RNA sequence: GGGAACGACUCGAGUAGAGUCGAAAAGCCGAAGACUUCUUCGAGUUCCAGAAGCUGCGGCUGAAGACCCUGCAGCGCUCGAUCAAGCUGCAGAUCGCCACCGACGCCAAGGACUACCGCCCGGAGUGGCUGGACUGGCUGUGGACCUGCUUCGGCGCUAUACCAAGGGAUUCGUCCCUUGGUAUAGAAAAGAAACAACAACAACAAC
Reactivity to DMS in 0.01 (KOAc 150mM, MgCl2 10mM, bicine 150mM(pH8.5), 24C), signal-to-noise 3, nucleotides 027 to 156: g030c000c020g020a070a060g010a110c010u000u010c030u000u010c050g010a150g000u000u040c050c070a130g000a110a090g010c000u000g010c040g050g000c010u010g030a100a120g010a060c020c060c030u010g000c020a030g020c000g010c080u010c050g070a120u000c150a100a120g000c010u000g000c010a050g010a030u000c040g010c050c030a140c030c030g010a130c070g000c040c040a100a170g020g010a150c020u000a110c060c080g030c000c000c060g010g000a190g030u000g000g020c030u000g000g010a190c060u020g010g010c030u000g030u000g000g000a080c090c050u000g020c010u000u000c020g020g010c150g000
Reactivity to 2A3 in 0.01 (KOAc 150mM, MgCl2 10mM, bicine 150mM(pH8.5), 24C), signal-to-noise 5, nucleotides 027 to 156: g000c000c000g020a040a040g030a250c020u030u010c010u060u050c110g090a060g080u180u100c090c060a030g040a050a010g000c030u060g000c010g040g010c040u030g020a040a010g040a040c020c030c000u020g010c010a010g010c010g030c070u150c140g150a230u120c090a070a040g000c020u000g000c010a000g010a050u080c060g030c040c010a060c020c040g070a070c020g030c010c030a050a070g020g040a080c030u110a090c050c040g030c010c020c040g090g090a160g060u220g100g000c100u110g020g040a060c020u010g020g000c010u030g020u050g010g000a030c010c020u070g010c020u020u030c020g010g000c000g000
Chemical mapping of a 207-nucleotide RNA with DMS and 2A3. 2A3 adducts were read by reverse transcription with SuperScript II with manganese. Values cover nucleotides 27 to 156. For 2A3, 3,603 sequencing reads were counted. DMS adducts were read by reverse transcription with MarathonRT.